Structure probing data (2A3 and DMS) for a 207-nucleotide construct. For DMS the reverse transcriptase was MarathonRT. The DMS profile rests on 5,332 reads. The data come from the RNA Mapping Database (RMDB), library M2RFOK.
RNA sequence: GGGAACGACUCGAGUAGAGUCGAAAAAUCCUCAGGUUCAUAAGCGUGAUGAUUGGGUGUUCAUGCUCCAUGCAGGACAUGUGCCUCCUUUGAACCUUGUUACGACCUUGGCACAUUACCCAUCUGAAAAAGACGUUCGCGUUCGCGCGAACGUCAACAGUAUUUGGAAGUUCGCUUCCAAAUACUGAAAAGAAACAACAACAACAAC
Reactivity to 2A3 in 0.01 (KOAc 150mM, MgCl2 10mM, bicine 150mM(pH8.5), 24C), signal-to-noise 6, nucleotides 027 to 156: a000u040c000c000u020c010a020g010g010u010u010c010a010u060a250a040g040c090g130u110g110a110u050g010a010u110u220g030g040g010u060g020u060u040c140a250u080g010c020u080c150c020a110u300g020c020a010g000g000a010c010a010u030g000u000g010c010c000u010c010c010u010u010u010g010a000a010c000c010u010u080g080u040u110a080c100g050a090c030c060u050u070g010g000c010a000c000a030u020u140a030c000c010c010a020u010c030u060g090a100a080a030a050a050g000a000c000g000u000u000c000g000c000g040u020u020c150g000c000g000c000g100a000a000c000g000u000c000a000a000
Reactivity to DMS in 0.01 (KOAc 150mM, MgCl2 10mM, bicine 150mM(pH8.5), 24C), signal-to-noise 2, nucleotides 027 to 156: a110u010c000c010u000c040a050g000g020u000u010c000a060u000a080a070g000c090g070u000g000a130u010g000a080u010u000g010g000g010u010g020u000u000c060a060u000g000c030u010c130c140a130u010g040c080a120g000g000a050c050a120u000g010u000g000c000c020u000c090c030u010u000u010g000a050a050c000c030u000u020g010u010u000a130c170g010a110c120c090u000u000g000g000c000a030c010a090u000u000a100c010c000c020a100u000c040u010g000a080a110a110a110a140g010a030c010g010u000u000c000g050c000g020u010u000c300g030c000g050c000g010a000a000c010g020u000c000a000a050